[RMDB]
RNA sequence: GGGAACGACUCGAGUAGAGUCGAAAAGAGAUGUGGUCGCGUAGGUCCAUAAACUACAAAGCAUCGAAUGGACAGUUCCGACGAGGCGACCACUCGGAGAAAGGAACGAAAAGCUACUAAUGUAGCAGGAAUGCAUCUCGUUCGCGAGAUGCAUUCCAAAAGAAACAACAACAACAAC
Reactivity to 2A3 in 0.01 (KOAc 150mM, MgCl2 10mM, bicine 150mM(pH8.5), 24C), signal-to-noise 1, nucleotides 027 to 126: g040a000g000a000u040g050u050g050g000u000c000g000c000g010u000a000g030g020u000c000c000a050u260a000a050a000c050u200a050c030a170a150a000g060c020a030u000c000g050a020a070u030g050g000a010c050a050g000u160u000c050c000g030a000c050g000a050g050g130c000g000a000c000c000a000c030u000c010g160g020a030g020a090a110a000g110g000a040a030c030g000a000a000a100a100g030c000u030a000c030u040a000a300u300g000u000a000g000c000a000
Reactivity to DMS in 0.01 (KOAc 150mM, MgCl2 10mM, bicine 150mM(pH8.5), 24C), signal-to-noise 1, nucleotides 027 to 126: g000a020g000a060u000g000u010g000g040u000c000g000c010g000u050a270g000g050u000c020c040a070u120a010a100a200c050u070a040c100a000a020a160g130c010a000u000c230g000a080a000u040g000g000a000c050a280g000u000u000c000c000g000a300c050g000a240g000g010c000g020a000c000c020a000c000u020c040g060g110a280g050a190a020a060g000g110a050a000c000g000a080a030a220a000g000c000u000a010c020u000a100a020u040g000u000a000g010c020a140

The data come from the RNA Mapping Database (RMDB), library OK1LIB. Structure probing data (2A3 and DMS) for a 177-nucleotide construct. The reactions ran in a buffer of 150 mM KOAc, 10 mM MgCl2 and 150 mM bicine (pH 8.5), at 24 C. For DMS the reverse transcriptase was MarathonRT.